The record gives the reactivity of an RNA of 177 nucleotides to 2A3 and DMS. Values cover nucleotides 27 to 126.

RNA sequence: GGGAACGACUCGAGUAGAGUCGAAAACAGACUCGAGCGAAAGCUCGGCGAAAGCCGCGUACAUGUGAGAGUCGGCGUGUGUACAGUCGACAGUUACUCUUCGGAGUAACAAUAGAAACAACAACAACCAUUACUGCUGAUUCGUCAGCAGUAAUGGAAAAGAAACAACAACAACAAC
Reactivity to 2A3 in 0.01 (KOAc 150mM, MgCl2 10mM, bicine 150mM(pH8.5), 24C), signal-to-noise 4, nucleotides 027 to 126: c050a010g020a020c020u020c010g000a000g030c030g040a140a030a010g030c010u000c010g000g010c000g050a100a050a000g040c040c000g000c020g010u050a040c040a130u180g040u040g060a070g000a020g070u010c000g000g000c040g000u160g010u050g020u030a030c010a050g060u030c040g030a050c020a020g000u020u010a000c010u000c000u050u050c230g120g000a000g000u000a000a000c000a000a000u130a040g060a060a120a010c040a020a010c010a030a010c010a020a040
Reactivity to DMS in 0.01 (KOAc 150mM, MgCl2 10mM, bicine 150mM(pH8.5), 24C), signal-to-noise 3, nucleotides 027 to 126: c090a080g010a020c030u010c010g000a270g000c000g020a070a150a100g000c000u010c020g000g030c040g010a190a080a170g020c070c010g000c080g020u010a040c140a130u030g000u000g010a130g000a010g000u010c000g010g000c050g000u000g000u010g010u020a110c160a060g060u000c020g000a070c300a120g000u020u000a000c000u010c010u000u040c160g010g000a010g010u000a000a000c000a030a030u040a100g000a120a080a070c050a040a040c080a020a160c300a110a060